[RMDB]
RNA sequence: GGGAACGACUCGAGUAGAGUCGAAAACAUCCGCCACCUCCUAGUUGUUACAAACAGAAUAGCAAAGAAGAUUUAUUUUUGCACAUUGAUAAAAUGAUGUUUUCACUGGGUAGACUAACUAAAAAACGUAAAUUUCGAACUUCGGUUCGAAAUUUACAAAAGAAACAACAACAACAAC
Reactivity to 2A3 in 0.01 (KOAc 150mM, MgCl2 10mM, bicine 150mM(pH8.5), 24C), signal-to-noise 2, nucleotides 027 to 126: c010a060u000c000c000g000c040c000a090c000c060u060c000c030u000a000g010u010u010g050u150u070a120c010a030a180a000c020a000g240a290a030u040a150g010c010a020a000a000g010a080a070g050a040u090u160u000a160u010u150u130u000u040g000c030a090c040a080u010u010g070a040u170a300a040a000a040u100g080a040u000g040u060u050u070u040c010a080c010u000g000g130g000u070a000g010a010c000u060a040a030c050u060a060a130a030a020a030a030c090

Source: RMDB library RFM100, as collected in RNAgym. This 177-nucleotide RNA was probed chemically with 2A3. The reactions ran in a buffer of 150 mM KOAc, 10 mM MgCl2 and 150 mM bicine (pH 8.5), at 24 C. Values are in units of 0.01, from 0 to 300, in steps of 10. 2A3 adducts were read by reverse transcription with SuperScript II with manganese.